Structure probing data (2A3) for a 177-nucleotide construct. 2A3 adducts were read by reverse transcription with SuperScript II with manganese.
[RMDB]
RNA sequence: GGGAACGACUCGAGUAGAGUCGAAAACGAAUGACUCUAACAUUUGUCCAGCCAAAAGGCGGAAGAGGGAUCUAUCACAAGUGUCAUACGCUCUUCACAAAAUUAGACCAAUACUAGCAGAUGCGUGACCGUUGGUGUCCUUCGGGACACCAACGGUAAAAGAAACAACAACAACAAC
Reactivity to 2A3 in 0.01 (KOAc 150mM, MgCl2 10mM, bicine 150mM(pH8.5), 24C), signal-to-noise 2, nucleotides 027 to 126: c000g060a080a170u070g280a250c020u080c050u060a050a000c090a020u050u050u090g090u030c000c000a000g000c000c000a190a300a140a140g110g030c070g000g000a010a010g000a120g080g000g000a030u000c040u080a060u290c060a000c000a050a220g000u000g030u080c040a150u000a020c050g000c010u000c000u170u080c000a000c040a130a150a000a000u120u080a010g060a100c010c000a000a050u000a100c000u000a000g020c070a000g110a090u180g000c040g040u020g090
Conditions: 150 mM KOAc, 10 mM MgCl2 and 150 mM bicine (pH 8.5), 24 C. Values cover nucleotides 27 to 126.